[RMDB]
RNA sequence: GGGAACGACUCGAGUAGAGUCGAAAACGUGACUGCAGCACCUGGUAUUGAAAGUGUGGGCACGCUUAUCCACGAGGCACAGCUUGCUGGGUUAGAUAUUCACUAUGAGGUGGUGGGGGAGCCGCAGCCUGCUUUUCAGUUUCGACUGAAAAGCAGGAAAAGAAACAACAACAACAAC
Reactivity to DMS in 0.01 (KOAc 150mM, MgCl2 10mM, bicine 150mM(pH8.5), 24C), signal-to-noise 2, nucleotides 027 to 126: c130g020u000g030a090c050u030g000c010a140g020c050a070c100c030u000g000g010u000a140u000u000g000a090a010a090g000u020g020u000g010g000g020c050a070c100g050c040u010u000a060u000c030c060a060c040g040a110g000g000c050a070c110a110g040c050u000u010g030c100u020g000g000g000u000u000a040g000a100u000a040u000u000c120a040c110u000a130u030g030a090g010g040u000g000g010u010g000g050g000g000g030a100g020c060c040g000c110a110g020
Reactivity to 2A3 in 0.01 (KOAc 150mM, MgCl2 10mM, bicine 150mM(pH8.5), 24C), signal-to-noise 1, nucleotides 027 to 126: c010g030u030g070a110c000u040g040c100a030g020c000a020c020c000u100g050g040u140a160u130u170g090a150a100a080g070u070g010u040g050g020g000c030a000c030g070c000u010u120a060u030c040c000a000c070g040a050g030g000c000a010c030a090g070c030u010u040g000c010u030g000g080g000u010u040a010g010a050u110a070u210u060c050a040c140u090a080u120g020a040g040g100u090g040g030u120g040g020g010g000g000a040g020c030c030g030c020a000g040
Background:
The record gives the reactivity of an RNA of 177 nucleotides to DMS and 2A3. Values are in units of 0.01, from 0 to 300, in steps of 10. The data come from the RNA Mapping Database (RMDB), library OK2TST. For DMS the reverse transcriptase was MarathonRT. Values cover nucleotides 27 to 126.